[RMDB]
An RNA of 177 nucleotides, treated with 2A3 and DMS and read out base by base.
DMS adducts were read by reverse transcription with MarathonRT.
The RNA was probed in 150 mM KOAc, 10 mM MgCl2 and 150 mM bicine (pH 8.5) at 24 C.
2A3 adducts were read by reverse transcription with SuperScript II with manganese.
High DMS reactivity at an A or C suggests that its Watson-Crick edge is free.
The data come from the RNA Mapping Database (RMDB), library OK2TRN.
RNA sequence: GGGAACGACUCGAGUAGAGUCGAAAAGACACCGCAAGUGCUGAAAUGCACCUCCUUGAGGAUUGCGUUAGUACCAUGAUGAUCUUGGAGGCCUAUGGGAUCAAGCACCACACAGCUAAGAGUUAUACUAAUCAUCAGGUUUCGACCUGAUGAUUAGAAAAGAAACAACAACAACAAC
Reactivity to 2A3 in 0.01 (KOAc 150mM, MgCl2 10mM, bicine 150mM(pH8.5), 24C), signal-to-noise 5, nucleotides 027 to 126: g010a000c010a010c050c010g010c080a070a030g020u020g030c020u080g060a060a060a070u090g000c000a030c010c000u020c010c120u080u220g030a030g060g030a100u110u150g040c000g010u030u060a040g010u050a050c030c030a030u100g020a080u070g030a060u050c020u030u050g030g030a010g010g040c010c020u050a070u090g060g000g010a030u100c060a060a010g000c020a020c000c010a000c000a010c020a030g030c010u050a120a010g060a000g090u130u090a130u040a090
Reactivity to DMS in 0.01 (KOAc 150mM, MgCl2 10mM, bicine 150mM(pH8.5), 24C), signal-to-noise 6, nucleotides 027 to 126: g010a090c050a070c030c040g010c130a130a180g010u000g020c010u000g000a060a060a070u010g010c030a100c000c030u000c000c190u000u000g010a050g020g010a080u010u000g000c030g010u000u000a060g010u000a060c050c040a100u000g000a080u000g000a090u010c020u000u000g000g010a180g010g010c060c030u010a070u000g000g020g000a070u000c060a060a090g000c060a080c030c050a050c090a050c100a070g010c040u010a080a080g000a110g010u000u000a060u010a190